This 177-nucleotide RNA was probed chemically with 2A3 and DMS. Reactivities are given for positions 27 through 126. For DMS, 8,428 sequencing reads were counted. Reactivities are rounded to 0.1 and cut off at 0 and 3.
RNA sequence: GGGAACGACUCGAGUAGAGUCGAAAAGAGACAUAUGAUCGUACUCGAUCGUACGAUCGCUAGGAUCCGUACCCAUGUGUACUAGCCAUGCGUACGCAGUACUCAUGUCAUGCCAUGUCAUACGCGCACCCUACCUUCAAUUCGUUGAAGGUAGGGUAAAAGAAACAACAACAACAAC
Reactivity to 2A3 in 0.01 (KOAc 150mM, MgCl2 10mM, bicine 150mM(pH8.5), 24C), signal-to-noise 7, nucleotides 027 to 126: g100a000g010a000c030a020u150a070u200g020a020u030c020g010u030a000c020u050c200g200a220u190c080g020u010a000c000g000a010u010c000g000c020u040a030g000g070a080u050c020c030g030u050a060c030c010c010a020u050g050u010g000u010a050c030u030a080g000c010c020a090u140g030c030g010u010a020c050g000c060a010g010u010a020c020u020c040a020u040g070u080c020a050u120g070c030c010a080u110g040u080c020a050u070a130c060g020c010g010c060
Reactivity to DMS in 0.01 (KOAc 150mM, MgCl2 10mM, bicine 150mM(pH8.5), 24C), signal-to-noise 7, nucleotides 027 to 126: g000a090g000a110c060a080u000a110u010g000a020u000c040g020u000a010c050u010c200g010a120u010c210g000u000a000c010g010a000u000c060g020c200u010a060g010g010a130u000c080c070g000u000a130c060c050c030a050u010g010u010g010u000a050c040u000a090g030c030c060a050u010g010c080g020u000a060c250g000c050a040g010u000a020c010u010c050a010u000g000u010c090a080u010g010c050c080a050u000g010u000c090a080u000a040c100g010c060g000c170